Structure probing data (DMS and 2A3) for a 177-nucleotide construct. 2A3 is a SHAPE reagent: it acylates the 2'-hydroxyl of flexible nucleotides of all four kinds. The reactions ran in a buffer of 150 mM KOAc, 10 mM MgCl2 and 150 mM bicine (pH 8.5), at 24 C. For DMS, 50,049 sequencing reads were counted.
RNA sequence: GGGAACGACUCGAGUAGAGUCGAAAAGAGCGUGAACAUGGCGUUGCCAAUGACGCACAACGCCACCAGAAACAACAAGAUAUGUUUGAGUGAGUAGCGGCUGGAAAAGAGUGCGAUGAUUGGCGCACAUCAUUGUUCAUUUCGAUGAACAAUGAUGAAAAGAAACAACAACAACAAC
Reactivity to DMS in 0.01 (KOAc 150mM, MgCl2 10mM, bicine 150mM(pH8.5), 24C), signal-to-noise 9, nucleotides 027 to 126: g010a090g020c040g020u000g010a100a120c170a120u010g010g010c040g010u000u000g020c050c050a060a060u000g000a100c060g010c040a080c020a100a050c040g010c010c010a080c040c030a090g000a100a060a060c070a040a060c080a080a130g010a130u010a070u010g010u000u000u000g010a130g020u000g000a090g010u000a060g010c070g000g010c060u000g000g000a060a050a070a090g010a140g010u000g010c010g010a100u000g000a110u000u000g010g010c020g020c130a150
Reactivity to 2A3 in 0.01 (KOAc 150mM, MgCl2 10mM, bicine 150mM(pH8.5), 24C), signal-to-noise 9, nucleotides 027 to 126: g050a010g020c040g030u070g060a070a050c050a130u110g060g000c020g040u050u090g010c010c000a040a060u100g070a030c020g010c010a010c010a020a030c020g020c000c000a010c010c010a030g110a040a080a020c040a020a010c030a090a050g070a210u160a070u220g110u040u080u080g120a140g030u060g030a060g010u030a010g030c020g060g000c050u060g060g020a040a080a020a030g120a020g010u020g010c010g040a070u070g030a030u020u070g030g000c010g000c020a020